[RMDB]
RNA sequence: GGGAACGACUCGAGUAGAGUCGAAAAGCUGGGCCUCGCCGUGGGUUCGAAGAUGGAGGCCGACAAGUUCCUCAACCUCGAGACCCUGGGCGUGCUCGUCCUGGGUGCAUUGGCCUUCUCGCUCGGCCGGGAUAGGAAGGUUCGCCUUCCUAUCCCGAAAAGAAACAACAACAACAAC
Reactivity to DMS in 0.01 (KOAc 150mM, MgCl2 10mM, bicine 150mM(pH8.5), 24C), signal-to-noise 2, nucleotides 027 to 126: g040c050u000g010g000g000c020c060u000c060g000c060c020g030u000g010g010g000u020u010c020g010a050a070g010a130u010g020g000a040g000g020c300c020g000a060c120a060a200g000u010u000c060c010u010c070a030a100c080c030u000c060g000a090g010a070c010c010c010u000g000g030g000c000g020u010g020c210u000c030g000u000c010c030u000g000g000g020u000g010c080a130u000u000g010g000c000c030u000u000c030u000c070g030c090u010c060g000g000c040
Reactivity to 2A3 in 0.01 (KOAc 150mM, MgCl2 10mM, bicine 150mM(pH8.5), 24C), signal-to-noise 2, nucleotides 027 to 126: g050c050u080g000g050g000c050c030u020c040g040c020c010g080u060g040g030g040u110u120c030g040a080a020g020a030u180g000g020a000g030g000c060c000g040a030c020a080a030g030u090u100c000c010u020c000a060a140c000c050u070c060g080a070g050a090c010c030c040u020g120g000g000c030g020u200g090c100u110c110g010u050c000c000u000g000g000g020u050g060c040a070u050u090g070g000c030c020u000u050c040u000c020g030c030u000c000g000g030c000
An RNA of 177 nucleotides, treated with DMS and 2A3 and read out base by base. For DMS the reverse transcriptase was MarathonRT. Conditions: 150 mM KOAc, 10 mM MgCl2 and 150 mM bicine (pH 8.5), 24 C. The DMS profile rests on 2,101 reads. 2A3 adducts were read by reverse transcription with SuperScript II with manganese. Reactivities are given for positions 27 through 126. The data come from the RNA Mapping Database (RMDB), library OK2TRN.